[RMDB]
RNA sequence: GGGAACGACUCGAGUAGAGUCGAAAAGAUAUGGAGAUGUAACGAGCAACAGCUCGGAAACGAGACAUGCUCAGUUAGAUCAUCUCCUAAGUCAAAAUCACGCCUCAGGUUCGCCUGAGGCGUGAAAGUUCUGUUUUAGGUUCGCCUAAAACAGAACAAAAGAAACAACAACAACAAC
Reactivity to DMS in 0.01 (KOAc 150mM, MgCl2 10mM, bicine 150mM(pH8.5), 24C), signal-to-noise 3, nucleotides 027 to 126: g010a020u000a300u000g000g000a010g010a030u000g010u000a060a050c010g010a010g000c000a020a040c300a210g010c000u000c000g000g000a070a070a230c000g000a020g000a020c110a150u010g000c000u000c000a070g010u000u000a040g010a100u000c010a000u000c000u000c000c010u000a030a070g010u000c040a090a080a130a150u000c000a000c000g000c000c010u000c000a000g010g000u010u030c250g010c010c000u000g010a000g000g000c000g000u010g000a000a040a060
Reactivity to 2A3 in 0.01 (KOAc 150mM, MgCl2 10mM, bicine 150mM(pH8.5), 24C), signal-to-noise 2, nucleotides 027 to 126: g010a010u070a010u140g020g000a000g000a010u000g000u040a020a020c030g010a020g020c020a020a140c080a180g060c020u010c000g000g000a040a040a010c010g000a000g010a040c090a130u050g000c010u000c100a010g020u040u040a120g000a170u190c000a000u000c000u020c000c000u030a090a020g070u050c020a000a030a050a290u050c010a020c010g000c000c010u000c020a010g070g080u060u090c290g050c070c000u000g000a000g000g000c000g000u000g010a000a000a000